Structure probing data (2A3) for a 207-nucleotide construct.

RNA sequence: GGGAACGACUCGAGUAGAGUCGAAAAACCUAUAUUUGGUUGUCCGUCCCACUCCCGCCGACGGCUCACAGACAAUCGGGUCAGUCACCACAGAUAAUGGCGGUCCCACUUACGCCAAUUGCGAAGCCUAUCUCUAAAAUAGCACCCUAUAGUAGAACGGAUAGAGACAUUUCGAUGUCUCUAUCCGAAAAGAAACAACAACAACAAC
Reactivity to 2A3 in 0.01 (KOAc 150mM, MgCl2 10mM, bicine 150mM(pH8.5), 24C), signal-to-noise 2, nucleotides 027 to 156: a000c090c030u140a180u030a030u230u120u140g060g000u020u060g010u070c050c050g030u000c010c000c000a040c020u000c000c000c000g010c000c000g030a120c030g020g040c010u050c000a080c030a060g120a050c090a050a100u180c070g000g000g000u050c070a040g010u010c030a060c110c000a030c010a000g120a100u060a140a070u130g020g000c000g040g000u040c000c000c000a090c000u000u020a020c010g000c000c000a060a240u060u090g060c060g010a030a000g080c000c010u100a080u030c010u000c000u100a050a090a050a120u100a050g050c010a070c020c000c000u140a150u110a150g270u200a040g050a060a000
The data come from the RNA Mapping Database (RMDB), library OK3TST. The RNA was probed in 150 mM KOAc, 10 mM MgCl2 and 150 mM bicine (pH 8.5) at 24 C. For 2A3 the reverse transcriptase was SuperScript II with manganese.